Structure probing data (DMS) for a 177-nucleotide construct. For DMS the reverse transcriptase was MarathonRT.
RNA sequence: GGGAACGACUCGAGUAGAGUCGAAAAAUUAGUCACCUCUCAGCCCCUCCACCUUGGAGUGCCCUAUUCGGAGCACUGCAGUUCCCGAUAGAAAGGCUAAGCACCUCGCAAUGACGUAAGGUGGGACGAUAGGCCCACCGUUCGCGGUGGGCCUAUCAAAAGAAACAACAACAACAAC
Reactivity to DMS in 0.01 (KOAc 150mM, MgCl2 10mM, bicine 150mM(pH8.5), 24C), signal-to-noise 2, nucleotides 027 to 126: a120u000u000a030g010u000c040a070c050c020u010c010u020c030a100g000c030c020c000c040u000c000c020a020c060c040u000u000g000g000a060g020u000g000c000c000c010u010a220u010u000c220g010g000a070g000c020a020c030u020g010c050a110g000u000u000c000c000c000g040a070u010a060g000a040a060a050g010g020c050u010a060a130g030c100a090c020c020u000c060g030c050a080a120u010g000a080c110g010u010a040a030g010g020u010g000g010g000a070c120